Structure probing data (2A3 and DMS) for a 207-nucleotide construct. The RNA was probed in 150 mM KOAc, 10 mM MgCl2 and 150 mM bicine (pH 8.5) at 24 C.
[RMDB]
RNA sequence: GGGAACGACUCGAGUAGAGUCGAAAAUGGGCCGUGUGCUUAACCAGGACAAGAUCUCCUUCUCUCCAACGUUGUUGCCAACUCAUGAUUCUCCUAACCUGUGCUUGGAGAGACGUGGUCCCAGAGUAAAACGAAGGGUGCUUCGGCACCCUUCGAAGUUGCAUAUUGAGUUCGCUCAAUAUGCAACAAAAGAAACAACAACAACAAC
Reactivity to 2A3 in 0.01 (KOAc 150mM, MgCl2 10mM, bicine 150mM(pH8.5), 24C), signal-to-noise 1, nucleotides 027 to 156: u000g000g000g000c000c000g050u060g040u060g090c040u080u090a120a000c030c020a010g020g030a040c050a080a060g050a210u070c030u020c070c000u080u020c030u010c000u000c000c010a010a020c040g010u020u020g030u030u040g020c040c050a100a030c060u020c050a090u080g100a150u190u020c040u060c020c010u060a090a120c020c060u100g030u090g090c050u020u070g000g000a030g000a000g010a020c010g000u060g000g010u080c010c000c000a060g020a020g070u150a010a070a040a060c030g000a000a000g010g000g000u000g000c000u020u060c080g090g020c010a010c050c000c030u000u000c000g000a000a000
Reactivity to DMS in 0.01 (KOAc 150mM, MgCl2 10mM, bicine 150mM(pH8.5), 24C), signal-to-noise 2, nucleotides 027 to 156: u000g010g010g010c000c020g040u000g030u010g030c110u000u000a100a100c050c060a040g000g010a150c040a150a130g020a160u000c050u000c030c030u000u010c010u000c020u000c010c000a030a100c090g000u010u000g010u000u010g020c010c010a090a100c060u000c070a090u020g020a110u000u000c000u020c030c010u010a050a090c080c060u000g000u010g000c060u000u000g040g020a140g000a050g010a020c060g000u010g010g020u010c010c010c000a150g010a110g030u000a040a060a100a190c000g010a060a020g000g010g040u000g030c010u000u010c300g030g020c010a010c000c000c010u010u000c000g000a020a050